[RMDB]
RNA sequence: GGGAACGACUCGAGUAGAGUCGAAAAGUGGACGAUUCCUGUUGUGGUAUCGUGGGAAGGAAAGGGGCAGGAGAGGAUUGAGCUUAGGGGACGGGAGACGACUGUUCGGAAGAGGAGCAGUGUGUACCAGAGCGGAGAGAUUCGUCUCUCCGCUCUGAAAAGAAACAACAACAACAAC
Reactivity to 2A3 in 0.01 (KOAc 150mM, MgCl2 10mM, bicine 150mM(pH8.5), 24C), signal-to-noise 3, nucleotides 027 to 126: g200u210g030g050a000c020g030a030u010u050c020c020u030g100u190u100g050u110g000g030u000a020u120c010g020u010g010g010g070a080a100g060g050a100a040a000g010g010g010g000c070a030g030g060a030g030a030g090g010a040u100u210g060a040g040c030u010u130a000g010g020g010g030a030c100g040g060g000a020g000a010c030g010a030c010u010g030u020u020c040g040g100a100a090g070a090g150g030a000g010c000a000g000u030g030u060g000u010a080c000
Reactivity to DMS in 0.01 (KOAc 150mM, MgCl2 10mM, bicine 150mM(pH8.5), 24C), signal-to-noise 2, nucleotides 027 to 126: g000u070g000g000a070c050g000a070u000u010c030c020u020g050u020u000g010u050g000g030u000a010u020c020g000u010g000g000g000a220a110g030g000a040a100a050g020g000g000g020c080a190g000g060a060g000a030g000g000a130u030u040g000a070g070c030u000u020a150g000g000g030g000a060c120g000g000g000a090g020a020c080g000a040c030u000g020u000u000c100g000g090a120a120g000a230g000g000a070g010c040a000g040u010g020u060g050u010a030c100
This 177-nucleotide RNA was probed chemically with 2A3 and DMS. Source: RMDB library OK1LIB, as collected in RNAgym. Values cover nucleotides 27 to 126. For DMS the reverse transcriptase was MarathonRT.